[RMDB]
The record gives the reactivity of an RNA of 177 nucleotides to 2A3 and DMS. 2A3 is a SHAPE reagent: it acylates the 2'-hydroxyl of flexible nucleotides of all four kinds. For DMS the reverse transcriptase was MarathonRT. Source: RMDB library OK2TRN, as collected in RNAgym. The 2A3 profile rests on 16,658 reads. Values cover nucleotides 27 to 126. 2A3 adducts were read by reverse transcription with SuperScript II with manganese.
RNA sequence: GGGAACGACUCGAGUAGAGUCGAAAACUAUAGCAAGGAUGAGAAUCUUUACCAACCACACCAGAUUUGCUCCCUGGGUAGGUUGUUUGGGUUCAUAAGUGUAAAAAACAUGGAUGGUGGCUCAAACCACAUAAGUACGAUUCGUCGUACUUAUGUGAAAAGAAACAACAACAACAAC
Reactivity to 2A3 in 0.01 (KOAc 150mM, MgCl2 10mM, bicine 150mM(pH8.5), 24C), signal-to-noise 8, nucleotides 027 to 126: c030u040a040u180a190g060c060a080a020g090g020a070u090g040a040g040a130a030u010c010u040u080u030a070c050c020a030a010c000c010a030c020a070c060c000a010g010a090u070u070u160g040c010u060c020c010c010u010g010g010g030u080a100g010g000u000u000g000u000u020u010g020g010g000u050u040c010a010u060a110a060g040u030g040u110a110a150a060a030a010a030c030a010u040g070g000a020u050g030g070u040g020g000c010u030c050a050a040a030c030
Reactivity to DMS in 0.01 (KOAc 150mM, MgCl2 10mM, bicine 150mM(pH8.5), 24C), signal-to-noise 9, nucleotides 027 to 126: c040u000a080u010a090g010c060a040a050g010g010a060u000g010a180g000a090a030u000c010u000u000u000a070c150c050a030a020c010c010a040c190a200c010c010a020g000a080u000u000u010g010c120u010c220c160c000u000g000g000g020u000a190g000g000u000u000g000u000u000u000g000g010g010u000u010c050a050u010a060a110g020u000g000u010a000a050a060a050a070a050c060a040u000g000g010a070u000g010g020u000g000g000c020u000c050a030a050a090c170